[RMDB]
RNA sequence: GGGAACGACUCGAGUAGAGUCGAAAACAAACAAACAAGGGUCCGAAACCAUCUAAGGUGAUAAAGAUGGAAUAUACGCUGUAAAAAUAAGCGUAGAAUCACCGACGGACCCACAAGAUCGGAUAAACCACCCUGAUAAUUUCGAUUAUCAGGGUGGAAAAGAAACAACAACAACAAC
Reactivity to DMS in 0.01 (KOAc 150mM, MgCl2 10mM, bicine 150mM(pH8.5), 24C), signal-to-noise 3, nucleotides 027 to 126: c030a060a100a160c160a060a040a080c230a070a170g020g000g010u000c000c000g020a040a170a150c000c040a020u010c010u000a140a060g030g020u010g000a050u060a080a080a120g030a030u010g010g000a090a070u010a090u000a010c000g020c000u000g010u040a020a100a220a140a080u050a100a000g000c010g010u000a000g000a110a080u010c040a000c090c010g000a230c030g000g010a000c000c000c000a010c130a080a040g000a040u050c090g000g000a150u020a050a110a120
Reactivity to 2A3 in 0.01 (KOAc 150mM, MgCl2 10mM, bicine 150mM(pH8.5), 24C), signal-to-noise 3, nucleotides 027 to 126: c010a000a080a000c000a000a120a000c050a110a110g020g020g000u000c000c000g060a140a030a030c000c030a030u140c030u120a120a170g050g060u090g080a100u120a100a150a000g070a030u080g030g090a070a000u100a000u000a010c000g000c000u000g110u290a000a000a140a110a140u190a100a010g000c000g000u000a000g010a030a050u020c020a000c060c000g000a010c000g000g000a000c000c000c000a000c000a020a000g000a000u100c080g100g100a080u130a050a050a040